[RMDB]
RNA sequence: GGGAACGACUCGAGUAGAGUCGAAAAGGAGGCAGGGAUGCCACAGUUUAACUGCCGGGUCUCUAAGAGCACACAUCUUUCUGGGGAGCAUUUAUGUCUUUGCCUUUGCUCUUGUUCUGGGCACAGUGGGUAGGAUGAAGUGACUGUCUUCCAGGAACAGUAAGAACUGAUUCGUCAGUUCUUACUGAAAAGAAACAACAACAACAAC
Reactivity to DMS in 0.01 (KOAc 150mM, MgCl2 10mM, bicine 150mM(pH8.5), 24C), signal-to-noise 3, nucleotides 027 to 156: g010g020a090g020g030c030a070g020g010g030a070u000g040c010c070a070c040a040g010u000u000u000a070a120c010u000g010c010c030g000g010g020u000c010u000c020u010a080a090g020a080g030c050a100c080a080c090a090u000c050u000u010u010c030u010g020g020g020g010a070g020c010a070u000u000u000a080u010g030u000c010u000u000u000g030c000c030u000u010u000g000c020u000c020u000u010g010u000u010c110u000g000g020g020c040a060c200a080g020u030g030g020g000u010a060g020g000a070u010g000a070a120g030u010g000a090c060u000g010u010c030u010u000c010c000a090g010g000a070a260
Reactivity to 2A3 in 0.01 (KOAc 150mM, MgCl2 10mM, bicine 150mM(pH8.5), 24C), signal-to-noise 7, nucleotides 027 to 156: g070g000a040g020g000c040a010g040g000g030a040u090g090c020c010a030c010a010g020u080u080u220a130a070c020u020g020c030c040g040g010g010u040c040u000c030u100a090a030g000a010g060c030a020c000a010c010a150u070c050u060u170u020c050u040g040g010g000g020a020g020c030a030u020u150u120a180u190g060u040c010u080u130u110g030c000c000u070u050u070g020c010u020c000u020u050g050u170u060c090u070g020g000g000c030a010c020a080g100u110g050g030g020u040a040g020g040a040u080g050a060a020g030u030g070a090c020u020g030u050c000u110u040c020c010a020g030g050a030a040
Record summary: This 207-nucleotide RNA was probed chemically with DMS and 2A3. It was measured as part of the RMDB library OK3TST. The reactions ran in a buffer of 150 mM KOAc, 10 mM MgCl2 and 150 mM bicine (pH 8.5), at 24 C. Values cover nucleotides 27 to 156. 2A3 is a SHAPE reagent: it acylates the 2'-hydroxyl of flexible nucleotides of all four kinds.